The record gives the reactivity of an RNA of 177 nucleotides to 2A3 and DMS. Source: RMDB library OK1LIB, as collected in RNAgym. For DMS the reverse transcriptase was MarathonRT. The 2A3 profile rests on 11,356 reads. The reactions ran in a buffer of 150 mM KOAc, 10 mM MgCl2 and 150 mM bicine (pH 8.5), at 24 C.

RNA sequence: GGGAACGACUCGAGUAGAGUCGAAAACGAUGACGAACGCGUCCAGCCGAACCACGCGGCGUCAGUGUACGGUCGACGCGCCGCUGCCAACGCCUAGCGAGGCUAGUGCGGUGGUGGAAGCUGUGCCGCAGGAGGAGCCGUUCGCGGUUCCUCCUGCAAAAGAAACAACAACAACAAC
Reactivity to 2A3 in 0.01 (KOAc 150mM, MgCl2 10mM, bicine 150mM(pH8.5), 24C), signal-to-noise 8, nucleotides 027 to 126: c050g080a060u160g050a020c050g020a220a060c050g030c010g050u010c030c030a040g030c030c030g040a050a040c040c000a030c070g020c010g020g020c010g040u050c040a040g020u030g040u140a050c050g010g080u080c070g050a030c010g010c030g000c010c000g000c010u020g000c010c000a030a010c020g010c000c010u020a030g030c050g300a100g230g000c000u010a020g010u040g240c000g000g010u010g010g010u030g010g040a050a020g000c020u030g020u060g030c010c020
Reactivity to DMS in 0.01 (KOAc 150mM, MgCl2 10mM, bicine 150mM(pH8.5), 24C), signal-to-noise 3, nucleotides 027 to 126: c070g030a130u030g010a090c030g000a080a080c110g010c020g010u000c060c050a080g010c000c060g010a110a080c070c060a130c100g040c000g000g020c010g000u010c010a070g020u010g010u050a140c050g000g000u000c080g010a110c090g010c030g020c000c040g000c010u000g000c000c020a050a040c030g000c000c000u000a060g000c040g000a230g010g000c000u000a010g040u000g010c000g010g030u020g020g000u000g010g000a120a100g010c010u020g020u030g000c010c090